[RMDB]
RNA sequence: GGGAACGACUCGAGUAGAGUCGAAAAGUGAAAGCUCCUUCUCUCGCAAUGUGUAACUCAUGAAUCUCAUGACCCCUGGUUGGAGAGAUCCGGACUAGGAGCCAGGGGGCCUCUGAUUCUGCCAGCCAAAACUGUCGUAAGUUCGCUUACGACAGAACGAUCAGCUUAUCUUCGGAUAAGCUGAUCGAAAAGAAACAACAACAACAAC
Reactivity to 2A3 in 0.01 (KOAc 150mM, MgCl2 10mM, bicine 150mM(pH8.5), 24C), signal-to-noise 2, nucleotides 027 to 156: g060u090g050a080a030a040g010c010u050c000c030u050u020c030u000c000u030c030g030c070a080a090u080g050u020g010u090a060a040c010u040c070a040u120g040a040a020u070c070u010c050a020u110g040a070c000c000c010c000u020g010g020u020u040g080g050a090g000a000g020a130u020c030c040g040g100a110c050u120a070g060g000a000g000c000c000a000g000g000g010g000g000c010c000u050c020u030g040a050u070u010c010u050g050c050c070a060g030c030c020a010a070a090a110c010u000g000u000c000g000u000a000a000g020u050u110c180g000c110u000u000a000c000g000a000c000a000g000a010a010
Background:
Chemical mapping of a 207-nucleotide RNA with 2A3. The reactions ran in a buffer of 150 mM KOAc, 10 mM MgCl2 and 150 mM bicine (pH 8.5), at 24 C.